An RNA of 207 nucleotides, treated with DMS and 2A3 and read out base by base. It was measured as part of the RMDB library OK3TST. The reactions ran in a buffer of 150 mM KOAc, 10 mM MgCl2 and 150 mM bicine (pH 8.5), at 24 C. Values cover nucleotides 27 to 156. DMS adducts were read by reverse transcription with MarathonRT. For 2A3 the reverse transcriptase was SuperScript II with manganese.

RNA sequence: GGGAACGACUCGAGUAGAGUCGAAAAUACAGAUGCAUGAGUCCGGUUUGAAUUGCAGCCAGUUUCUUAUACUGGCGCUUCAUGGCGUGCCUCGGAAAUCAGAUAGUAUCGCGCAGUCCAUCUGGGACCCCCCAGGAGGGUGUCUGCCGGUCCGCUACAAGAAUGUAAGAUUCGUCUUACAUUCUUGAAAAGAAACAACAACAACAAC
Reactivity to DMS in 0.01 (KOAc 150mM, MgCl2 10mM, bicine 150mM(pH8.5), 24C), signal-to-noise 2, nucleotides 027 to 156: u000a070c020a030g000a070u010g000c050a150u000g020a110g030u000c030c020g030g020u000u000u000g000a060a090u000u010g000c020a140g080c030c000a010g020u000u000u010c170u010u000a110u000a070c000u000g020g020c000g030c020u010u000c030a040u010g010g020c000g010u000g010c050c020u000c030g010g010a060a140a090u010c060a050g000a130u000a100g030u010a110u000c040g020c090g040c060a130g000u000c000c010a060u000c010u000g020g000g000a030c040c010c030c010c020c000a050g020g020a040g000g000g020u000g020u010c040u000g010c040c070g020g000u000c020c020g000c020u010a300
Reactivity to 2A3 in 0.01 (KOAc 150mM, MgCl2 10mM, bicine 150mM(pH8.5), 24C), signal-to-noise 4, nucleotides 027 to 156: u200a000c060a020g040a030u030g060c040a030u070g030a040g070u050c030c070g150g170u000u040u070g050a040a010u130u150g010c050a040g010c010c010a000g010u000u140u100c200u250u180a070u100a210c000u000g010g000c000g010c000u000u000c010a020u030g090g020c010g030u080g010c000c010u000c010g010g030a050a100a060u070c020a020g070a130u110a080g070u070a010u080c010g000c010g000c100a000g010u000c020c010a050u050c010u020g180g160g300a300c020c000c000c000c000c010a010g010g030a030g020g050g030u080g100u050c000u020g000c000c020g000g020u010c020c060g030c030u080a050